[RMDB]
RNA sequence: GGGAACGACUCGAGUAGAGUCGAAAAACAGUCAAUAACCCACGAUGUCAAAGAACAAAAGUGUUGGAUCCACUUUUGACAGGUUACCAUGUGCCACAUCGACCCGUGACACUCUGUUCAUCAGAGAGUCACUUCCCUUAUUCGUAAGGGAAGUGACAAAAGAAACAACAACAACAAC
Reactivity to 2A3 in 0.01 (KOAc 150mM, MgCl2 10mM, bicine 150mM(pH8.5), 24C), signal-to-noise 9, nucleotides 027 to 126: a000c040a020g070u060c020a030a090u060a090a110c000c010c020a020c020g040a030u050g050u090c070a090a060a100g070a130a140c010a020a010a030a010g010u020g020u090u150g080g020a030u030c020c000a000c000u020u010u010u010g030a050c040a030g020g030u050u070a070c030c040a070u160g050u100g070c010c010a020c000a020u020c020g040a060c000c010c030g070u070g030a010c020a010c040u000c000u010g060u140u190c050a200u070c010a080g020a000g010a010
Reactivity to DMS in 0.01 (KOAc 150mM, MgCl2 10mM, bicine 150mM(pH8.5), 24C), signal-to-noise 7, nucleotides 027 to 126: a070c120a090g000u020c080a080a060u010a070a100c040c020c030a160c070g010a040u020g000u000c090a060a100a090g000a100a170c070a020a040a020a040g000u000g020u000u020g020g010a150u030c180c010a020c010u000u000u000u000g000a070c080a070g000g010u000u030a070c090c110a050u030g020u000g000c030c040a030c020a040u000c050g010a130c060c040c040g020u010g000a070c090a100c000u000c000u000g010u000u050c170a120u020c010a010g010a000g010a150
This 177-nucleotide RNA was probed chemically with 2A3 and DMS. It was measured as part of the RMDB library OK1LIB. Reactivities are given for positions 27 through 126. The RNA was probed in 150 mM KOAc, 10 mM MgCl2 and 150 mM bicine (pH 8.5) at 24 C.